[RMDB]
RNA sequence: GGGAACGACUCGAGUAGAGUCGAAAAUCGAUGGCGUUCGCGCCAUCGAAGAGCCGUACGGCGUAGCACGCGGAUAGGAGUGAAGAUAUCCAAGGCCAUGGAGGAGGCGUGCUUUCGAGCACGCCAACAAUCAGUAUCGGUUCGCCGAUACUGAUUGAAAAGAAACAACAACAACAAC
Reactivity to DMS in 0.01 (KOAc 150mM, MgCl2 10mM, bicine 150mM(pH8.5), 24C), signal-to-noise 8, nucleotides 027 to 126: u000c010g010a010u000g010g010c000g020u000u020c210g020c010g030c000c010a010u000c000g010a020a040g000a130g010c010c010g010u010a080c130g020g010c030g020u000a060g010c050a120c080g020c180g010g000a080u000a050g000g000a090g010u000g000a100a080g000a120u010a070u000c020c020a080a150g000g010c030c050a090u000g000g000a100g010g010a180g020g010c000g020u000g010c010u000u010u010c130g010a030g010c010a010c000g000c010c000a020a050
Reactivity to 2A3 in 0.01 (KOAc 150mM, MgCl2 10mM, bicine 150mM(pH8.5), 24C), signal-to-noise 1, nucleotides 027 to 126: u020c000g000a010u010g000g000c020g030u040u050c250g010c010g000c100c000a000u000c000g000a000a000g010a020g020c020c010g070u150a050c120g040g020c020g010u030a020g060c050a020c120g040c040g030g020a030u080a110g080g060a060g060u140g110a070a050g050a130u080a040u110c020c000a030a030g040g000c030c030a050u080g070g000a060g030g070a040g020g000c000g000u000g000c000u020u020u040c150g010a010g000c000a000c000g000c000c000a000a000